[RMDB]
RNA sequence: GGGAACGACUCGAGUAGAGUCGAAAAGGCUACAAUAGGGUGUCGAGAAAUAGGGCGUCGAGAAAUUUAACGCAGGCCUUUGAUUGACCAUCACAAUCAGAUUUUCCUCGCAGGCCGCCACACAGAACUCAGUCCUAAUGUUCGCAUUAGGACUGAGAAAAGAAACAACAACAACAAC
Reactivity to DMS in 0.01 (KOAc 150mM, MgCl2 10mM, bicine 150mM(pH8.5), 24C), signal-to-noise 1, nucleotides 027 to 126: g000g030c030u000a150c110a080a090u010a100g000g000g010u010g000u000c010g010a180g000a040a070a030u000a070g000g010g020c040g080u000c010g000a120g000a070a070a080u000u010u000a020a020c110g010c070a160g000g030c160c050u010u020u010g000a030u000u010g000a160c070c030a050u010c080a090c030a000a020u000c070a040g000a100u020u000u000u010c040c010u000c050g010c040a070g000g000c050c020g000c030c040a060c090a110c170a100g010a050a200
An RNA of 177 nucleotides, treated with DMS and read out base by base. For DMS the reverse transcriptase was MarathonRT. The DMS profile rests on 674 reads. High DMS reactivity at an A or C suggests that its Watson-Crick edge is free. Source: RMDB library OK2TST, as collected in RNAgym. Conditions: 150 mM KOAc, 10 mM MgCl2 and 150 mM bicine (pH 8.5), 24 C.